[RMDB]
RNA sequence: GGGAACGACUCGAGUAGAGUCGAAAACAGAGGGAUUUGGAAUUCGCCUAAUAGAAUCUACUAGAUUACAAUGAAUCCUUCCUGGUCAACUAAUUUCAAAGUGGCGAAUUUGAAGUUGCGGAAUGUGCACAUUAAUUGGCUUCGGCCAAUUAAUGUGAAAAGAAACAACAACAACAAC
Reactivity to 2A3 in 0.01 (KOAc 150mM, MgCl2 10mM, bicine 150mM(pH8.5), 24C), signal-to-noise 1, nucleotides 027 to 126: c000a000g050a010g000g000g000a010u020u000u050g060g090a050a090u030u000c000g070c020c000u060a090a070u120a160g050a020a010u000c000u040a260c050u020a300g010a000u110u000a020c060a040a100u140g010a050a000u080c000c000u030u040c060c050u080g010g130u100c040a010a060c010u110a050a050u000u000u030c020a000a000a020g030u000g060g000c000g000a020a000u000u000u000g000a000a000g040u000u040g090c080g080g230a120a110u220g110u170g210
Reactivity to DMS in 0.01 (KOAc 150mM, MgCl2 10mM, bicine 150mM(pH8.5), 24C), signal-to-noise 3, nucleotides 027 to 126: c000a020g010a030g000g000g010a020u000u000u000g010g000a190a130u010u000c010g000c010c000u000a150a130u010a110g000a060a030u000c030u010a150c220u000a100g010a020u000u000a090c040a100a190u000g000a020a000u000c000c010u000u010c110c070u000g010g000u010c100a060a150c080u000a050a010u000u000u000c010a010a010a010g000u000g000g010c010g030a030a150u000u000u010g000a010a030g000u000u000g020c080g000g000a070a040u000g020u010g010
About this RNA: Structure probing data (2A3 and DMS) for a 177-nucleotide construct. The RNA was probed in 150 mM KOAc, 10 mM MgCl2 and 150 mM bicine (pH 8.5) at 24 C. For DMS the reverse transcriptase was MarathonRT. Values cover nucleotides 27 to 126.